Source information
The record gives the reactivity of an RNA of 207 nucleotides to 2A3. The RNA was probed in 150 mM KOAc, 10 mM MgCl2 and 150 mM bicine (pH 8.5) at 24 C. For 2A3, 1,268 sequencing reads were counted.
[RMDB]
RNA sequence: GGGAACGACUCGAGUAGAGUCGAAAACUUCCGGAGCUCUCUCUCGAGUUCCUCUAACUUCUUUCUUCCACUCACCCACUGCUCGAGAACCUCUUCUCUUCCUCCGCGGUGUUUCUUCGACUCGGACCGGCUCAUCUCGACAAGAGGCGGCAGUCCUACCAUUAAUACUCUUCGGAGUAUUAAUGGUAAAAGAAACAACAACAACAAC
Reactivity to 2A3 in 0.01 (KOAc 150mM, MgCl2 10mM, bicine 150mM(pH8.5), 24C), signal-to-noise 2, nucleotides 027 to 156: c030u110u060c080c080g090g030a070g030c000u000c000u000c010u000c010u050c110g020a010g050u020u000c010c030u060c040u100a120a120c040u060u070c030u060u140u020c010u070u020c050c030a080c050u050c030a060c000c020c000a060c060u020g010c000u020c030g070a040g050a190a140c030c020u060c000u100u040c020u030c000u060u030c040c000u040c020c030g020c040g070g080u050g000u040u030u010c020u050u060c070g100a130c050u000c050g050g030a060c010c010g100g000c040u020c030a100u010c020u030c050g090a110c160a170a050g000a030g030g050c010g000g020c000a000g010u030c000c010u020